[RMDB]
RNA sequence: GGGAACGACUCGAGUAGAGUCGAAAAGGGGUUAGCGUUUGCAAAACGCUGUUAUUGCAAUGAUGUGGAUUUAGCGCAAGUAGGUCCGAAAUCCAGAUCAACAUUUCGGACCUCCGCGCUAAUAAAAUCCUGCUUGCUAUUUCGAUAGCAAGCAGGAAAAAGAAACAACAACAACAAC
Reactivity to DMS in 0.01 (KOAc 150mM, MgCl2 10mM, bicine 150mM(pH8.5), 24C), signal-to-noise 2, nucleotides 027 to 126: g000g000g000g020u000u000a020g000c020g020u000u000u000g020c200a090a060a010a030c020g010c030u010g000u000u000a040u010u000g010c060a020a040u020g020a070u000g020u000g000g020a150u030u000u000a010g000c020g030c000a120a060g040u000a030g000g010u000c000c000g000a010a000a000u010c130c190a180g000a130u010c170a070a060c290a020u000u000u000c010g000g000a020c000c010u010c040c120g000c010g000c010u030a000a010u000a020a100a070a050